[RMDB]
RNA sequence: GGGAACGACUCGAGUAGAGUCGAAAACGAUCCUCGAGAGAGGAUCGACGAGUCUUCGGACUCGAUUACCGCGAAGAUGUGCCGCGGGGCUACGAUGGUAUUGUGGGAAAGAAUACCAUUGUACCUUCUUGUCGUAGCCGAACAACUCGCACGUCCAACGGCCGGCUGAUUUCGAUCAGCCGGCCGUAAAAGAAACAACAACAACAAC
Reactivity to 2A3 in 0.01 (KOAc 150mM, MgCl2 10mM, bicine 150mM(pH8.5), 24C), signal-to-noise 1, nucleotides 027 to 156: c000g000a010u000c000c000u000c010g040a050g000a000g000a000g000g000a000u000c000g000a000c000g000a010g000u000c000u080u150c250g090g000a000c000u010c000g000a110u190u220a060c000c000g000c000g040a040a070g030a010u000g000u000g000c000c000g010c010g020g000g000g000c000u000a000c000g020a020u020g020g010u000a000u000u010g000u020g000g000g040a070a180a100g060a100a020u080a090c000c000a010u000u040g000u000a000c000c000u140u200c090u130u210g010u030c000g000u010a000g000c000c000g040a010a030c020a050a070c010u070c090g000c000a000c000g000u000c000c040a000
This 207-nucleotide RNA was probed chemically with 2A3. The RNA was probed in 150 mM KOAc, 10 mM MgCl2 and 150 mM bicine (pH 8.5) at 24 C. Reactivities are rounded to 0.1 and cut off at 0 and 3. For 2A3 the reverse transcriptase was SuperScript II with manganese.